Structure probing data (DMS and 2A3) for a 177-nucleotide construct.
[RMDB]
RNA sequence: GGGAACGACUCGAGUAGAGUCGAAAACUUAAGAGAGACAAAGAAAGAGAGACUUUAUCGACUCAUCCUUUCAAGCGCAAUUCAAUAUCGAUGCCAACUGUAAACUAUGAGUCAUCGUGCGACAUGAUGCUUACCAGUCUUUCGAGACUGGUAAGCAAAAAGAAACAACAACAACAAC
Reactivity to DMS in 0.01 (KOAc 150mM, MgCl2 10mM, bicine 150mM(pH8.5), 24C), signal-to-noise 1, nucleotides 027 to 126: c040u010u030a050a040g000a090g000a200g000a030c040a040a080a170g000a100a160a040g000a040g010a080g000a020c020u000u000u000a060u000c080g040a100c000u000c010a110u000c050c030u010u000u000c030a010a070g010c180g020c080a040a040u000u020c120a020a130u010a120u010c010g050a000u020g010c040c010a050a220c090u020g000u010a030a110a030c130u000a030u000g000a140g010u000c010a090u000c120g030u000g000c060g010a050c240a010u000g010a060
Reactivity to 2A3 in 0.01 (KOAc 150mM, MgCl2 10mM, bicine 150mM(pH8.5), 24C), signal-to-noise 1, nucleotides 027 to 126: c050u080u080a160a030g080a010g010a000g020a070c050a070a110a000g040a100a070a010g060a050g000a000g000a020c020u040u100u040a110u220c110g090a110c000u010c010a090u030c000c000u020u120u050c060a040a000g000c010g000c110a050a150u100u080c020a020a050u080a050u260c060g000a000u030g000c000c010a030a130c060u120g070u300a070a120a140c050u080a080u140g030a020g020u050c010a010u000c050g000u000g030c020g010a010c020a030u100g110a030
Reactivities are given for positions 27 through 126. The reactions ran in a buffer of 150 mM KOAc, 10 mM MgCl2 and 150 mM bicine (pH 8.5), at 24 C. For 2A3 the reverse transcriptase was SuperScript II with manganese. DMS adducts were read by reverse transcription with MarathonRT. The 2A3 profile rests on 689 reads.